[RMDB]
RNA sequence: GGGAACGACUCGAGUAGAGUCGAAAAGAGCCGCUCGUAGGCCUCCGGUGAAUCUUCGGCGAAUGCCGAGCCGUAGGAGAAGUCCAUGUUGACGUCGCGGACUUCCAUGGCGGUGCCCGGCACCUUGAAACGCGGAACAAUUCGUUGUUCCGCGUUUAAAAGAAACAACAACAACAAC
Reactivity to DMS in 0.01 (KOAc 150mM, MgCl2 10mM, bicine 150mM(pH8.5), 24C), signal-to-noise 1, nucleotides 027 to 126: g000a250g030c000c040g020c010u000c160g040u000a120g000g020c000c000u000c030c020g000g050u000g000a120a130u020c160u030u000c020g000g010c000g000a140a120u010g020c020c000g000a020g000c000c010g040u000a060g000g020a150g010a030a010g000u000c020c010a040u000g030u000u020g000a130c230g000u010c040g050c120g010g010a040c000u010u010c010c240a110u000g010g020c010g000g000u000g010c030c000c010g000g000c160a090c070c060u050u000g000
Annotation: Structure probing data (DMS) for a 177-nucleotide construct. The RNA was probed in 150 mM KOAc, 10 mM MgCl2 and 150 mM bicine (pH 8.5) at 24 C.